Background: This 177-nucleotide RNA was probed chemically with DMS and 2A3. Source: RMDB library VIROID, as collected in RNAgym. For DMS the reverse transcriptase was MarathonRT. The 2A3 profile rests on 1,731 reads. The reactions ran in a buffer of 150 mM KOAc, 10 mM MgCl2 and 150 mM bicine (pH 8.5), at 24 C.
[RMDB]
RNA sequence: GGGAACGACUCGAGUAGAGUCGAAAAGGCGGGCCUCCCGAUCCGAGGGGCCCGAUCCCAGAUCUGGAGAGCACUCCGGCCCGAAGGGUUGAGUAGCACUCAGAGGGAGGAAUCCACUCGGAGAUGACUUGUAAUCCAUGUUCGCAUGGAUUACAAGAAAAGAAACAACAACAACAAC
Reactivity to DMS in 0.01 (KOAc 150mM, MgCl2 10mM, bicine 150mM(pH8.5), 24C), signal-to-noise 2, nucleotides 027 to 126: g000g010c020g010g000g010c000c010u020c030c040c070g010a120u000c120c010g040a030g000g000g030g030c010c020c000g000a010u000c000c000c010a200g000a110u000c030u000g010g000a040g000a070g040c020a090c010u000c030c110g010g000c000c010c010g000a170a140g010g030g050u000u000g010a050g000u000a110g050c010a130c010u000c000a040g010a100g000g020g010a030g010g010a150a160u000c000c000a120c070u010c000g020g000a030g000a100u010g000a170
Reactivity to 2A3 in 0.01 (KOAc 150mM, MgCl2 10mM, bicine 150mM(pH8.5), 24C), signal-to-noise 1, nucleotides 027 to 126: g160g050c000g010g000g000c000c020u000c010c030c020g020a120u000c020c010g000a020g010g010g010g020c000c040c010g020a010u000c010c000c010a020g040a170u010c020u100g100g080a000g000a010g000c000a000c000u050c090c060g050g000c000c010c020g230a210a130g010g010g000u000u020g000a010g010u060a040g010c010a010c050u000c000a000g030a020g020g030g000a050g080g050a030a040u090c010c020a050c040u000c000g030g010a040g010a100u150g030a030